[RMDB]
RNA sequence: GGGAACGACUCGAGUAGAGUCGAAAACGUGCCAUGUUCGCAUGGCACGAAAUAAAGGAAACAGGAAGGCAUCGGCGCACGAUGUAACAAGCGCAAAUUAAAAAACAUUUCACUUCGGUGAAAUGAACAACUCCUAAGACUUCGGUCUUAGGAGUUGAAAAGAAACAACAACAACAAC
Reactivity to DMS in 0.01 (KOAc 150mM, MgCl2 10mM, bicine 150mM(pH8.5), 24C), signal-to-noise 1, nucleotides 027 to 126: c040g060u020g000c020c010a000u000g000u010u000c200g050c020a010u000g000g000c030a000c000g000a030a040a030u030a010a090a090g010g010a060a060a070c050a040g000g000a050a070g020g000c030a030u000c030g030g000c060g000c050a010c050g020a030u000g020u010a100a070c070a060a160g000c040g000c060a090a100a060u010u020a010a030a110a050a040a080c010a020u000u000u000c000a010c000u000u020c160g010g000u010g000a000a000a000u000g020a070a140
Reactivity to 2A3 in 0.01 (KOAc 150mM, MgCl2 10mM, bicine 150mM(pH8.5), 24C), signal-to-noise 1, nucleotides 027 to 126: c000g000u000g030c000c010a000u020g040u060u060c190g000c140a010u010g000g000c000a000c000g020a000a010a000u090a010a050a030g130g010a080a030a010c050a020g110g020a100a000g060g000c020a020u000c010g020g010c030g020c020a130c040g000a000u040g060u180a040a030c070a150a050g000c030g000c030a030a070a040u140u150a110a080a010a000a000a050c010a000u000u040u000c010a000c010u030u000c070g000g000u010g010a000a000a000u000g000a000a010